[RMDB]
RNA sequence: GGGAACGACUCGAGUAGAGUCGAAAAGCUGACGGAUAACGUGGUGUUAUAGAUAUAUAUCUUACGUCAUAAUAAUAUCAUAGCUCGGGAAAUAUAUAUAUCGUAGCUAAAUUGUUAUCGUCAGCGAAGCUAGUAUGGUCUUCGGACCAUACUAGCUAAAAGAAACAACAACAACAAC
Reactivity to 2A3 in 0.01 (KOAc 150mM, MgCl2 10mM, bicine 150mM(pH8.5), 24C), signal-to-noise 3, nucleotides 027 to 126: g000c010u010g000a000c030g100g020a010u010a000a000c020g000u010g010g050u020g030u010u040a040u080a150g000a000u010a000u010a000u000a020u020c030u050u080a040c030g030u010c050a020u060a190a020u100a080a050u090a070u130c080a040u080a090g020c080u060c110g030g040g080a010a130a010u100a000u000a000u000a010u000a010u060c000g020u000a010g000c000u030a020a070a070u110u210g000u020u000a000u020c000g000u000c000a000g000c000g000a000
Reactivity to DMS in 0.01 (KOAc 150mM, MgCl2 10mM, bicine 150mM(pH8.5), 24C), signal-to-noise 2, nucleotides 027 to 126: g010c000u000g010a020c000g050g020a000u020a000a010c030g020u000g000g000u000g020u000u000a010u010a080g020a040u000a010u000a030u010a040u000c090u010u000a060c050g000u010c030a060u010a140a080u040a060a130u000a230u000c060a090u000a090g010c130u000c050g000g030g000a060a080a050u000a040u000a030u010a010u000a020u000c010g000u010a030g000c000u000a110a130a060u010u010g030u000u000a010u000c000g000u000c010a000g000c000g000a010
Description: Structure probing data (2A3 and DMS) for a 177-nucleotide construct. Values are in units of 0.01, from 0 to 300, in steps of 10.